The record gives the reactivity of an RNA of 177 nucleotides to DMS. Reactivities are given for positions 27 through 126.

[RMDB]
RNA sequence: GGGAACGACUCGAGUAGAGUCGAAAAGAUAUGGAAGAUCUACAAGUCCAACAGCUGUGCUCGGAAACGAGCACAGACAUGGACGAGUAGAGUCUUCCUAAGUCAAAAGAAGGGGUUCGCCCCUUCAUCUGCCAUAUGGGUUCGCCCAUAUGGCAGAAAAAGAAACAACAACAACAAC
Reactivity to DMS in 0.01 (KOAc 150mM, MgCl2 10mM, bicine 150mM(pH8.5), 24C), signal-to-noise 1, nucleotides 027 to 126: g000a040u000a300u000g010g040a040a000g010a170u000c000u000a020c000a140a300g000u000c000c000a060a210c300a210g000c020u000g000u010g000c000u000c000g000g020a110a100a260c010g000a000g010c000a000c090a000g000a000c110a210u000g000g040a000c000g000a300g000u000a010g000a020g000u000c000u000u000c000c000u000a000a110g000u020c020a050a140a130a160g010a000a000g000g010g000g000u000u000c240g010c010c000c000c000u000u000c000a070